[RMDB]
RNA sequence: GGGAACGACUCGAGUAGAGUCGAAAAAGCGGAAAAGUUAUAUUUGACAUUACACUUACUUUCAACAAGUGUGCAAUGGACUGAUUUGCAGGAAUCAGAUAACAUAUCGAAUUUAACGAUGGCCAUCGCUUCGCUCACUAUUCGUAGUGAGCGAAGCAAAAGAAACAACAACAACAAC
Reactivity to 2A3 in 0.01 (KOAc 150mM, MgCl2 10mM, bicine 150mM(pH8.5), 24C), signal-to-noise 1, nucleotides 027 to 126: a030g080c110g040g000a050a010a000a000g050u130u000a000u000a080u170u000u210g000a000c010a000u000u170a020c000a000c000u040u110a000c000u000u300u300c110a240a200c000a160a000g000u000g000u020g020c040a020a000u050g000g000a010c010u000g000a000u020u000u120g090c080a060g090g030a000a000u020c000a000g040a030u010a040a030c010a050u130a000u120c000g000a030a000u000u070u000a000a000c000g000a030u140g110g040c000c000a080u150c050

The record gives the reactivity of an RNA of 177 nucleotides to 2A3.